[RMDB]
RNA sequence: GGGAACGACUCGAGUAGAGUCGAAAAUGCAAGUAGUGCUAUUGUUGGAAUCACCGUACCUAUUUAGGUUUACGCUCCAAGAUCGGUUGAUAGCAGCCCUAUCAAUAUCUAGGAGAACUGUGCUAUGAAAACGGUAUUGGCUUCGGCCAAUACCGAACAAACUGUCCUUGUUCGCAAGGACAGUUUGAAAAGAAACAACAACAACAAC
Reactivity to 2A3 in 0.01 (KOAc 150mM, MgCl2 10mM, bicine 150mM(pH8.5), 24C), signal-to-noise 4, nucleotides 027 to 156: u140g020c040a100a030g060u080a030g060u110g060c050u090a050u080u090g050u020u070g030g070a120a070u120c020a030c050c020g020u020a010c010c000u080a180u230u210u290a040g000g000u010u060u090a030c040g000c010u000c010c000a020a020g010a060u090c220g130g000u000u020g010a020u010a000g060c070a040g050c050c000c000u010a000u000c000a000a000u010a010u070c020u020a050g000g010a000g010a020a010c040u040g010u030g030c000u070a020u180g110a080a070a010a000c000g000g000u000a000u000u000g010g020c010u020u030c160g070g000c000c000a000a000u000a000c000c000g010a000a000
Reactivity to DMS in 0.01 (KOAc 150mM, MgCl2 10mM, bicine 150mM(pH8.5), 24C), signal-to-noise 2, nucleotides 027 to 156: u000g010c060a090a170g000u010a070g010u000g000c000u000a090u000u030g040u010u000g000g010a120a100u000c030a070c030c020g040u000a050c030c000u000a210u000u010u010a080g010g000u010u000u000a040c070g010c010u000c000c020a080a080g000a040u000c280g070g030u000u010g000a010u010a010g040c040a300g000c250c300c010u000a020u020c000a000a030u000a080u010c020u000a130g000g000a050g010a040a050c090u000g020u000g020c070u000a060u010g000a040a080a110a110c060g010g000u010a000u000u010g010g020c040u000u010c300g070g010c030c000a010a010u000a000c000c000g020a010a030
This 207-nucleotide RNA was probed chemically with 2A3 and DMS. For 2A3 the reverse transcriptase was SuperScript II with manganese. Values cover nucleotides 27 to 156. The reactions ran in a buffer of 150 mM KOAc, 10 mM MgCl2 and 150 mM bicine (pH 8.5), at 24 C. The 2A3 profile rests on 3,063 reads.